[RMDB]
RNA sequence: GGGAACGACUCGAGUAGAGUCGAAAAGAUAUGGAGGUGGUGGCGAGCUGUGUAUCGGAAACGAUACCAGCGAUGAGCCACCACCUCCUAAGUCAAAAGAGUGGUUAUGGUUCGCCAUAACCACUCAGUUCCUAAAUUUCUUCGGAAAUUUAGGAACAAAAGAAACAACAACAACAAC
Reactivity to DMS in 0.01 (KOAc 150mM, MgCl2 10mM, bicine 150mM(pH8.5), 24C), signal-to-noise 1, nucleotides 027 to 126: g000a000u000a020u000g000g000a020g010g020u000g000g020u000g010g030c010g020a180g020c000u010g020u020g020u000a000u000c000g010g000a000a000a020c000g010a020u000a000c000c000a010g010c000g010a060u000g020a200g010c000c000a000c000c000a000c000c000u000c000c000u000a000a050g000u010c000a130a100a110a150g010a020g010u000g000g000u000u000a010u000g010g010u000u010c300g020c000c000a010u000a000a000c010c000a000c000u000c000a020

Conditions: 150 mM KOAc, 10 mM MgCl2 and 150 mM bicine (pH 8.5), 24 C. Structure probing data (DMS) for a 177-nucleotide construct. DMS (dimethyl sulfate) methylates the pairing face of unpaired adenines and cytosines. It was measured as part of the RMDB library TTRDES.